An RNA of 177 nucleotides, treated with 2A3 and DMS and read out base by base. The RNA was probed in 150 mM KOAc, 10 mM MgCl2 and 150 mM bicine (pH 8.5) at 24 C. DMS adducts were read by reverse transcription with MarathonRT.
RNA sequence: GGGAACGACUCGAGUAGAGUCGAAAAGGCACUGUACGACACGCAUAGAACUCCACACGUUCACGGUAAACCUGAGAAUCAGGUGUGAAUGGUUUACCGUGGAGUAGUGUCGUACUAUGCGAGUGCAGCAGUGCGGAACAUUCGUGUUCUGCACUGCAAAAGAAACAACAACAACAAC
Reactivity to 2A3 in 0.01 (KOAc 150mM, MgCl2 10mM, bicine 150mM(pH8.5), 24C), signal-to-noise 9, nucleotides 027 to 126: g110g000c010a000c040u040g010u030a010c020g010a000c020a000c030g040c040a090u060a200g120a080a040c010u020c020c010a010c000a010c040g070u020u020c010a000c010g020g110u170a130a060a040c010c010u040g030a050g190a200a250u190c030a040g030g050u060g040u020g060a030a040u070g030g060u090u130u080a090c020c020g000u000g000g000a000g000u040a070g000u000g000u000c000g000u010a010c000u000a000u000g000c030g030a030g030u070g010c060a050
Reactivity to DMS in 0.01 (KOAc 150mM, MgCl2 10mM, bicine 150mM(pH8.5), 24C), signal-to-noise 9, nucleotides 027 to 126: g010g010c000a020c030u000g020u000a010c010g010a060c050a060c000g000c250a140u010a110g010a110a060c010u000c020c030a010c010a130c040g010u000u000c010a010c000g010g010u000a050a100a030c000c000u000g010a200g010a140a170u010c040a040g010g020u000g000u000g010a030a050u000g000g010u000u000u010a040c170c160g030u000g000g010a010g000u000a060g010u000g000u000c030g010u000a020c010u000a020u000g000c050g000a070g020u010g010c090a140